[RMDB]
Chemical mapping of a 177-nucleotide RNA with 2A3. For 2A3 the reverse transcriptase was SuperScript II with manganese. It was measured as part of the RMDB library RFMREP. The reactions ran in a buffer of 150 mM KOAc, 10 mM MgCl2 and 150 mM bicine (pH 8.5), at 24 C.
RNA sequence: GGGAACGACUCGAGUAGAGUCGAAAACGCGUGAUGAGGUGCAGAAGGCAUGUCGCCGCUACGGCGGUGGCUCGCGUAGCCGUCUGGCUGUGCGCGUACUGUGAGCUACUGUACUCCAUGGGUGAACGUGUCUAUGCGUGUUCGCACGCAUAGACACAAAAGAAACAACAACAACAAC
Reactivity to 2A3 in 0.01 (KOAc 150mM, MgCl2 10mM, bicine 150mM(pH8.5), 24C), signal-to-noise 1, nucleotides 027 to 126: c080g020c030g030u050g010a170u030g020a070g020g080u030g020c000a000g000a210a130g070g000c000a040u150g000u000c020g000c030c020g010c000u020a020c170g080g000c000g000g010u000g000g030c000u020c010g000c000g000u020a000g000c000c020g170u250c220u240g010g000c010u020g040u070g090c000g000c010g030u040a070c040u090g100u110g120a030g020c010u020a030c000u020g000u030a010c050u000c000c000a000u040g040g050g050u080g080a100a020c060